[RMDB]
RNA sequence: GGGAACGACUCGAGUAGAGUCGAAAAAACAGAACAGAGAAAAGAUAAACAUCUCCUGAACACUCCAAAAAAGGGGUACAAGGUUAGUAUCGGGAACACCGUUUGAGGCCUUGGCCUCAAUUUAUAGCAUGCGAUAUGCUUUCGAGCAUAUCGCAUGAAAAGAAACAACAACAACAAC
Reactivity to 2A3 in 0.01 (KOAc 150mM, MgCl2 10mM, bicine 150mM(pH8.5), 24C), signal-to-noise 2, nucleotides 027 to 126: a000a000c040a020g090a090a040c090a070g030a000g030a060a120a210a010g110a070u190a070a140a000c060a080u050c000u000c000c010u000g010a110a020c060a020c100u060c000c010a040a100a000a030a110a020g100g020g000g000u250a250c040a010a000g050g000u010u040a070g060u120a060u130c010g000g080g000a020a120c060a090c190c010g000u000u010u050g050a030g080g000c010c030u020u050g000g020c000c000u030c000a000a000u030u040u010a120u070a090g110
Reactivity to DMS in 0.01 (KOAc 150mM, MgCl2 10mM, bicine 150mM(pH8.5), 24C), signal-to-noise 2, nucleotides 027 to 126: a110a090c080a030g000a110a080c060a250g000a000g010a000a170a130a160g020a110u010a110a110a140c240a070u000c000u030c050c030u000g000a120a130c160a190c040u010c010c010a020a060a010a090a100a090g000g000g000g000u000a090c040a010a030g020g010u010u000a050g030u060a000u000c000g000g000g000a120a000c090a150c010c010g000u010u000u030g000a110g000g030c000c020u000u000g000g000c000c000u000c000a010a000u040u010u040a100u000a090g030